Record summary: An RNA of 177 nucleotides, treated with DMS and 2A3 and read out base by base. For 2A3, 1,669 sequencing reads were counted. The reactions ran in a buffer of 150 mM KOAc, 10 mM MgCl2 and 150 mM bicine (pH 8.5), at 24 C. Source: RMDB library OK2TRN, as collected in RNAgym. High DMS reactivity at an A or C suggests that its Watson-Crick edge is free. For DMS the reverse transcriptase was MarathonRT.
[RMDB]
RNA sequence: GGGAACGACUCGAGUAGAGUCGAAAACAAGCAAUUGCAGCAUCGGCUCAGAGCACUUUGGCAGAUCUGGGCUCAGCAUGGUGAGCACCAUCUGCCCCACACAGAGCUCUCUCAGGAGUGGGUCAUGCUCGCAUGAUUGGUUCGCCAAUCAUGCGAGAAAAGAAACAACAACAACAAC
Reactivity to DMS in 0.01 (KOAc 150mM, MgCl2 10mM, bicine 150mM(pH8.5), 24C), signal-to-noise 2, nucleotides 027 to 126: c060a110a070g000c180a120a070u000u020g020c110a080g000c050a030u000c120g030g000c020u020c010a070g010a040g000c060a080c110u000u020u010g000g000c010a020g000a000u000c120u000g000g000g000c010u000c010a030g010c190a150u000g000g010u000g010a030g030c000a140c020c040a170u000c000u010g000c010c010c130c110a050c250a090c150a000g000a080g010c050u000c010u010c020u010c090a070g000g050a100g000u000g050g000g000u020c040a070u000g000
Reactivity to 2A3 in 0.01 (KOAc 150mM, MgCl2 10mM, bicine 150mM(pH8.5), 24C), signal-to-noise 1, nucleotides 027 to 126: c030a000a090g070c000a020a280u220u200g020c070a030g030c020a100u050c100g030g000c010u000c020a020g000a020g010c020a020c030u120u100u100g000g000c030a000g010a000u000c170u230g000g000g000c010u000c000a020g060c040a030u140g190g000u050g020a000g000c020a090c150c000a000u030c000u000g030c000c000c000c000a180c000a020c040a000g040a010g010c000u000c000u000c000u020c030a120g080g100a110g060u100g020g020g020u040c020a000u100g010